Source: RMDB library OK2TST, as collected in RNAgym. Structure probing data (2A3 and DMS) for a 177-nucleotide construct. The reactions ran in a buffer of 150 mM KOAc, 10 mM MgCl2 and 150 mM bicine (pH 8.5), at 24 C. 2A3 adducts were read by reverse transcription with SuperScript II with manganese. DMS adducts were read by reverse transcription with MarathonRT.
[RMDB]
RNA sequence: GGGAACGACUCGAGUAGAGUCGAAAAUCGAGGGCCUUGUCCCUUUCACCUGUGCCGUGUCUGUGUGACACUGAAGCUCUGUCUGGUGCGGGUUGAAGUUUGUGACCCCCACUUACCAGGCCCAGAGGGAGUAUUAACGAUUCGUCGUUAAUACUCCAAAAGAAACAACAACAACAAC
Reactivity to 2A3 in 0.01 (KOAc 150mM, MgCl2 10mM, bicine 150mM(pH8.5), 24C), signal-to-noise 5, nucleotides 027 to 126: u120c030g030a220g020g000g010c030c030u080u100g040u060c000c000c000u000u030u010c000a000c000c000u020g020u030g030c010c040g040u010g010u000c030u050g300u050g170u200g170a010c000a030c080u080g230a070a020g010c030u050c080u260g180u100c020u040g020g000u010g020c020g010g030g000u020u160g010a030a030g010u060u120u130g140u160g110a240c000c010c010c000c000a010c010u010u000a010c000c000a010g000g000c000c020c000a020g030a030g010
Reactivity to DMS in 0.01 (KOAc 150mM, MgCl2 10mM, bicine 150mM(pH8.5), 24C), signal-to-noise 8, nucleotides 027 to 126: u010c090g010a170g010g010g010c010c050u000u000g020u000c020c010c010u010u000u000c040a040c020c010u010g020u000g000c020c020g000u000g010u000c010u010g020u010g020u010g020a020c010a020c030u010g010a120a060g010c030u010c170u000g000u010c020u000g000g010u000g010c050g010g010g010u010u010g010a030a040g010u010u000u000g010u000g010a300c030c020c010c050c010a170c040u010u010a030c050c070a060g010g010c010c010c010a160g000a150g010